[RMDB]
RNA sequence: GGGAACGACUCGAGUAGAGUCGAAAAGACGAAAGACACGUUUGUGUGAGAGUAUGUAGGCUUUUAUGAAGUGAUGAAACUGCCUUUCCAUGCCUUUGCAAAUUAGAAACAGUAUAGAUUAUCAUGGAAAGUGGGGUCAGAGAUUAGGAGGGGAGGACGUAUCCUUAGGAUUCGUCCUAAGGAUACGAAAAGAAACAACAACAACAAC
Reactivity to DMS in 0.01 (KOAc 150mM, MgCl2 10mM, bicine 150mM(pH8.5), 24C), signal-to-noise 3, nucleotides 027 to 156: g020a070c020g010a080a080a080g000a070c010a030c080g000u000u010u000g060u000g000u010g010a080g010a080g010u000a040u010g020u000a100g030g010c040u000u000u000u010a100u010g020a050a150g020u000g000a120u040g000a060a030a070c040u000g000c070c020u000u000u000c020c020a060u000g030c060c100u000u000u000g020c050a120a060a120u000u010a100g020a200a080a120c060a100g030u000a140u000a100g000a170u010u000a070u000c020a050u000g000g000a010a030a080g020u000g000g030g020g000u000c020a070g020a090g010a120u010u000a060g010g000a080g020g020g020g020a060g020g030a130
Reactivity to 2A3 in 0.01 (KOAc 150mM, MgCl2 10mM, bicine 150mM(pH8.5), 24C), signal-to-noise 8, nucleotides 027 to 156: g050a010c050g050a100a060a030g090a020c030a010c060g050u070u140u130g060u030g010u060g020a070g010a010g020u060a050u120g050u060a040g020g040c020u090u060u050u050a120u190g090a100a040g040u050g110a070u050g030a060a060a040c040u070g030c020c000u000u010u010c010c000a010u010g010c010c020u120u080u090g020c030a010a100a170u120u080a140g110a110a110a020c040a030g040u070a040u050a100g030a020u050u120a050u270c030a000u020g010g010a030a000a010g040u090g010g040g010g000u020c020a030g030a010g010a110u070u120a060g030g020a010g010g010g020g010a030g000g030a000
The record gives the reactivity of an RNA of 207 nucleotides to DMS and 2A3.
For 2A3, 7,026 sequencing reads were counted.
The reactions ran in a buffer of 150 mM KOAc, 10 mM MgCl2 and 150 mM bicine (pH 8.5), at 24 C.